[RMDB]
Chemical mapping of a 207-nucleotide RNA with 2A3 and DMS. Conditions: 150 mM KOAc, 10 mM MgCl2 and 150 mM bicine (pH 8.5), 24 C. For DMS the reverse transcriptase was MarathonRT. Source: RMDB library ARCHII, as collected in RNAgym.
RNA sequence: GGGAACGACUCGAGUAGAGUCGAAAAGACCGGACCAGGAUGGCUCAAACUAAUGUAGACUCGCGUGGAGGCUUUGUCCGGAGCUGAAGCGUUAAAACCAAUCGGACUCGUCAGUUGUGAAGCCUGUCAGUCGGCGUCACACUGAUUAACUAAAAGAGCAAUGACAUAAGUUCGCUUAUGUCAUUGCAAAAGAAACAACAACAACAAC
Reactivity to 2A3 in 0.01 (KOAc 150mM, MgCl2 10mM, bicine 150mM(pH8.5), 24C), signal-to-noise 3, nucleotides 027 to 156: g030a030c010c010g010g010a030c030c020a030g110g070a090u030g020g000c010u040c100a050a100a100c060u100a090a080u210g070u110a060g000a060c010u020c040g030c020g010u030g010g050a020g010g010c000u050u000u050g010u000c000c020g010g000a000g010c010u010g000a010a000g010c000g030u030u060a010a030a000a050c040c030a030a030u140c030g000g000a000c020u010c030g010u000c010a000g000u120u130g010u100g010a000a010g010c030c000u040g230u170c050a070g070u130c070g000g000c010g010u010c000a000c000a000c000u010g000a000u000u040a010a000c090u090a010a010a110a030g110a000
Reactivity to DMS in 0.01 (KOAc 150mM, MgCl2 10mM, bicine 150mM(pH8.5), 24C), signal-to-noise 1, nucleotides 027 to 156: g040a150c040c000g030g000a080c070c020a050g010g000a110u000g000g070c060u000c040a070a070a170c090u010a050a020u000g020u010a090g010a080c030u000c090g000c050g000u000g010g000a300g010g010c050u000u000u010g000u000c050c060g080g000a120g020c030u000g000a300a300g020c010g000u010u000a030a060a100a080c030c090a010a120u000c140g000g010a100c070u010c130g010u000c030a050g000u000u020g040u000g010a020a020g010c000c000u000g080u000c100a140g070u000c110g000g000c000g070u000c030a040c060a070c010u000g000a000u000u000a070a040c060u010a040a040a110a120g010a250